[RMDB]
RNA sequence: GGGAACGACUCGAGUAGAGUCGAAAACGAAACCAGACGAGCUACCCAUGAGCAGUUUAAAAGAACCAACUCAUCUAUGUGGCAAAAUAGUGAGAAGACUUGUAGGUAGAGGUGAAAAGCCUAACGAGCCUGGUGAUAGCUGGUUGUCCGAGAAAGACUCCGUAAAUAGGUUCGCCUAUUUACGGAGAAAAGAAACAACAACAACAAC
Reactivity to 2A3 in 0.01 (KOAc 150mM, MgCl2 10mM, bicine 150mM(pH8.5), 24C), signal-to-noise 2, nucleotides 027 to 156: c020g040a110a020a000c010c010a010g020a020c010g020a020g040c000u010a030c050c010c030a090u060g010a040g010c000a000g010u050u090u220a080a110a000a010g030a020a000c030c020a010a040c020u000c010a110u060c030u050a010u020g050u080g180g000c000a090a110a000a000u010a000g000u000g000a020g030a190a010g060a120c040u110u130g040u070a020g000g000u030a000g010a020g100g010u040g050a080a140a010a040g030c010c000u010a050a020c000g010a000g020c000c000u010g000g000u030g070a180u040a040g060c010u020g020g000u030u030g030u020c020c030g030a020g120a080a120a010g040a080
Reactivity to DMS in 0.01 (KOAc 150mM, MgCl2 10mM, bicine 150mM(pH8.5), 24C), signal-to-noise 2, nucleotides 027 to 156: c070g030a190a120a130c000c020a040g040a110c060g010a300g000c020u000a050c030c020c010a050u000g010a030g090c000a110g050u000u010u000a030a110a200a300g000a080a070c050c020a040a150c030u000c000a050u020c020u000a080u020g040u000g020g010c110a080a050a100a060u010a020g020u000g020a120g000a100a100g000a020c020u000u010g020u010a020g010g010u010a080g000a110g000g000u000g000a060a110a120a150g010c030c010u020a040a100c030g000a140g030c000c000u000g030g030u000g010a090u000a160g020c030u010g010g000u000u000g010u000c030c040g000a200g010a070a040a160g020a230